[RMDB]
RNA sequence: GGGAACGACUCGAGUAGAGUCGAAAAGAUCAAACAAACUAAAUGCGAACUCUAACGAGCUUGCCCUCGCCGCUUAAUUGACGGUGACGUUCCUCCAGUGAAGUCUGUGAAUUGGAGGGGCGACUACUUACAGGCUGGCCAAAAGAGCGGGCGACCGGAACAGUUAACCGUUCGCGGUUAACUGUUCAAAAGAAACAACAACAACAAC
Reactivity to 2A3 in 0.01 (KOAc 150mM, MgCl2 10mM, bicine 150mM(pH8.5), 24C), signal-to-noise 2, nucleotides 027 to 156: g080a080u230c120a040a070a150c070a110a080a120c070u200a160a050a030u160g090c020g080a130a040c000u010c000u010a010a040c010g000a000g040c020u080u100g090c010c000c000u000c010g000c000c000g000c000u000u100a090a110u210u050g020a060c000g000g000u050g030a000c000g000u000u020c000c000u000c020c000a010g050u010g070a070a000g090u130c110u110g210u130g110a010a010u020u000g000g000a010g000g000g000g010c000g000a000c000u190a050c030u120u090a040c000a040g100g020c020u040g010g050c000c000a000a090a030a040g050a000g000c040g000g080g020c000g010a020c070c070g130
This 207-nucleotide RNA was probed chemically with 2A3. The reactions ran in a buffer of 150 mM KOAc, 10 mM MgCl2 and 150 mM bicine (pH 8.5), at 24 C.